The data come from the RNA Mapping Database (RMDB), library M2RFPK. The record gives the reactivity of an RNA of 207 nucleotides to DMS and 2A3. For DMS the reverse transcriptase was MarathonRT. The 2A3 profile rests on 1,057 reads. The RNA was probed in 150 mM KOAc, 10 mM MgCl2 and 150 mM bicine (pH 8.5) at 24 C.
[RMDB]
RNA sequence: GGGAACGACUCGAGUAGAGUCGAAAAUUACUCUUGUUAGGUGAAAGUUGAAGGUCGCCGAGCCAGUCCGUACAUCCAAAAAGGACUCUAUGUAGUAGGAAGUCGAGAGCCUAUGAGAGUUAGAGUCAUGCCUAUUUUGUGUUCGCACAAAAUAGAACCCAAAGAUUAGGUUCGCCUAAUCUUUGGGAAAAGAAACAACAACAACAAC
Reactivity to DMS in 0.01 (KOAc 150mM, MgCl2 10mM, bicine 150mM(pH8.5), 24C), signal-to-noise 1, nucleotides 027 to 156: u000u020a130c030u000c050u000u000g010u000u000a020g010g020u000g020a130a060a140g030u000u000g000a160a070g090g020u000c020g110c060c050g000a080g010c000c020a100g010u000c080c000g000u000a060c060a130u010c020c060a060a100a100a100a090g000g010a040c000u000c020u010a040u000g020u000a180g000u010a060g000g010a030a090g020u000c080g010a190g000a200g000c030c000u000a020u000g010a150g000a180g000u010u000a000g000a080g010u000c010a060u000g000c020c030u000a030u010u000u000u020g010u000g020u020u000c300g010c020a010c000a020a000a000a000u010a010g020a090a090
Reactivity to 2A3 in 0.01 (KOAc 150mM, MgCl2 10mM, bicine 150mM(pH8.5), 24C), signal-to-noise 2, nucleotides 027 to 156: u140u080a080c010u010c000u010u070g060u050u040a030g000g030u040g040a140a080a070g040u100u130g120a060a000g110g010u030c020g010c040c010g010a010g030c030c010a010g030u000c010c010g000u010a060c020a130u030c080c040a070a040a080a020a040g080g020a000c000u000c000u010a040u080g030u020a000g050u000a010g000g030a060a060g050u140c140g050a030g020a010g220c000c000u010a020u030g050a100g010a010g090u020u030a000g010a000g010u010c020a030u100g080c020c010u000a000u000u000u000u020g000u000g030u000u070c150g040c110a000c000a000a000a000a000u000a000g010a050a080